[RMDB]
RNA sequence: GGGAACGACUCGAGUAGAGUCGAAAAACAACCACCUCAGAGCUACUCAACAAUACCAAAUUCAGGGCCCUGAUUUGGAAAGUGUAAGACCCUCUCACCAGGCCAUUCUUUAUCACUUUAGUAAGCAGAGUGUCCUAAGGGGAUAUAGAGAAUAUUACGUAUUCUUUCGUUUCGACGAAAGAAUACGAAAAGAAACAACAACAACAAC
Reactivity to 2A3 in 0.01 (KOAc 150mM, MgCl2 10mM, bicine 150mM(pH8.5), 24C), signal-to-noise 1, nucleotides 027 to 156: a000c020a000a050c010c010a050c020c020u030c040a030g000a030g040c000u050a030c000u040c020a190a050c010a050a140u180a160c000c030a040a090a000u200u110c020a030g060g090g000c040c080c040u000g000a000u000u000u090g000g000a170a080a120g050u070g010u120a110a120g090a160c000c000c000u010c010u000c010a030c000c070a000g060g000c040c000a020u030u000c020u030u120u090a200u030c000a040c100u050u050u000a080g020u130a190a000g030c030a000g040a010g040u060g060u030c000c000u020a060a070g040g050g000g030a020u020a000u010a020g030a020g030a150a010u200a070u150u180a020